[RMDB]
RNA sequence: GGGAACGACUCGAGUAGAGUCGAAAACAGCCAGUGCAUGGCCGGACAGACUGGGCUUCCAAGUACGCAUCUCGGCGAUGACUGUCUGCCUUGGUGAUGAAUCUCUUCCUAGGGAGAAGCAGGAUACUGUAGUAACUGAUUUCGAUCAGUUACUACAAAAAGAAACAACAACAACAAC
Reactivity to 2A3 in 0.01 (KOAc 150mM, MgCl2 10mM, bicine 150mM(pH8.5), 24C), signal-to-noise 8, nucleotides 027 to 126: c000a000g020c010c010a010g030u150g210c020a030u020g110g010c000c010g040g010a020c010a040g050a030c010u030g010g040g120c110u300u090c040c010a080a040g030u040a090c060g000c070a070u010c100u070c070g010g000c020g090a020u030g020a020c020u020g010u020c000u030g050c010c020u030u090g100g030u080g040a130u080g030a100a110u030c010u010c010u090u030c020c030u070a070g040g050g000a090g000a040a010g040c050a030g030g080a080u080a150c070
Reactivity to DMS in 0.01 (KOAc 150mM, MgCl2 10mM, bicine 150mM(pH8.5), 24C), signal-to-noise 9, nucleotides 027 to 126: c040a040g000c030c010a020g010u010g020c050a040u000g000g010c010c020g010g000a060c110a130g010a070c040u000g010g010g010c180u010u000c030c030a060a080g010u000a090c130g010c120a110u000c020u000c050g020g010c020g000a040u000g000a090c020u000g000u000c010u000g000c030c020u000u000g020g010u000g010a090u010g010a100a100u000c040u000c020u000u000c010c040u000a100g000g000g000a070g010a050a060g010c080a060g000g010a110u010a050c180